[RMDB]
RNA sequence: GGGAACGACUCGAGUAGAGUCGAAAAUUUAAGGUGGGUGCUGCCAUACAUAAUGGUGAAGUCAGUUGUAUAAACAUGCAGUGGCUGGCUAGUGUGUUUUUUGAAUUACAAACUGUAAUGGAAGCGAUAGCAAGACCUAGUUCGCUAGGUCUUGCUAAAAAGAAACAACAACAACAAC
Reactivity to DMS in 0.01 (KOAc 150mM, MgCl2 10mM, bicine 150mM(pH8.5), 24C), signal-to-noise 2, nucleotides 027 to 126: u000u040u000a030a140g020g000u000g000g030g000u020g030c130u030g000c030c010a050u050a080c130a110u010a110a060u020g010g010u040g000a050a070g040u040c000a060g010u030u010g000u000a060u010a010a070a060c070a080u030g020c020a060g000u010g010g010c030u000g000g000c020u000a040g010u000g000u010g010u000u000u030u000u000u040g000a090a030u010u010a020c040a060a100a070c140u010g000u010a040a030u000g000g070a060a060g010c090g000a110
Reactivity to 2A3 in 0.01 (KOAc 150mM, MgCl2 10mM, bicine 150mM(pH8.5), 24C), signal-to-noise 2, nucleotides 027 to 126: u140u110u100a060a010g080g000u000g000g020g000u060g020c030u060g000c000c010a040u080a080c010a010u210a060a140u090g070g000u060g180a090a000g050u050c000a000g040u000u030g030u020a040u110a090a130a020c000a000u070g030c000a050g060u040g030g000c040u020g030g000c000u180a080g000u050g000u000g050u080u000u000u000u000u160g040a040a030u090u020a010c020a020a100a030c070u090g040u260a000a130u040g000g000a010a000g040c050g050a120